The record gives the reactivity of an RNA of 177 nucleotides to 2A3 and DMS. The 2A3 profile rests on 9,077 reads. Values cover nucleotides 27 to 126.
RNA sequence: GGGAACGACUCGAGUAGAGUCGAAAAUACCAUAUGCCAGGCUGCUCAAACAAUGACAUUGAUUUCUCACAGUUUCGCAGGCUGGAAGUCUAGAUCAGGGUGCAGCACACUGCAGUUCUUGGUAAGGUCACCAUUACUGUUUCGACAGUAAUGGUGAAAAAGAAACAACAACAACAAC
Reactivity to 2A3 in 0.01 (KOAc 150mM, MgCl2 10mM, bicine 150mM(pH8.5), 24C), signal-to-noise 2, nucleotides 027 to 126: u060a010c000c000a030u050a070u240g050c000c020a020g090g040c010u010g010c000u090c110a080a070a050c020a060a180u090g050a030c030a060u100u180g050a080u130u130u040c030u010c000a100c010a050g000u000u100u070c060g000c030a020g060g000c010u000g010g010a000a010g050u000c050u090a070g020a290u040c020a020g000g000g060u020g000c010a000g020c060a020c030a030c070u050g000c010a030g030u110u070c030u040u040g030g040u060a080a080g090g020
Reactivity to DMS in 0.01 (KOAc 150mM, MgCl2 10mM, bicine 150mM(pH8.5), 24C), signal-to-noise 6, nucleotides 027 to 126: u010a160c020c010a140u010a090u000g010c010c020a020g000g000c010u010g000c030u010c110a040a040a050c060a080a100u010g010a040c140a100u000u000g010a120u010u000u000c110u010c070a150c180a150g010u000u000u000c240g010c060a050g010g000c020u000g000g000a020a080g010u000c090u000a070g010a050u000c020a040g010g010g010u000g020c040a030g000c150a110c200a090c060u000g010c020a030g000u000u000c040u000u000g010g010u010a060a080g000g010